Notes: This 177-nucleotide RNA was probed chemically with 2A3. For 2A3, 397 sequencing reads were counted. Reactivities are given for positions 27 through 126. 2A3 adducts were read by reverse transcription with SuperScript II with manganese.
[RMDB]
RNA sequence: GGGAACGACUCGAGUAGAGUCGAAAAAUGAACCGGGAACAAGCGCGGGGUCCUGGCCUGGGCUGGGAGCUCCAGGAGCUGGGCGGUUCUGGACCGCGGUAUGGGCCGGGAGGCCUGGGCACCCGGAUCCCGCGCCAGUAUUCGUACUGGCGCGGGAAAAAGAAACAACAACAACAAC
Reactivity to 2A3 in 0.01 (KOAc 150mM, MgCl2 10mM, bicine 150mM(pH8.5), 24C), signal-to-noise 1, nucleotides 027 to 126: a000u070g000a070a030c000c000g000g000g000a140a050c070a250a020g040c240g000c000g020g020g000g000u000c000c000u020g000g000c000c000u040g000g110g000c000u100g020g020g010a060g030c150u090c030c000a070g040g000a040g000c050u050g000g080g080c080g000g080u000u020c000u030g010g070a020c000c000g080c020g160g030u250a250u300g040g030g010c000c000g000g000g000a000g090g080c000c000u040g000g070g000c000a040c000c000c010g000g000a000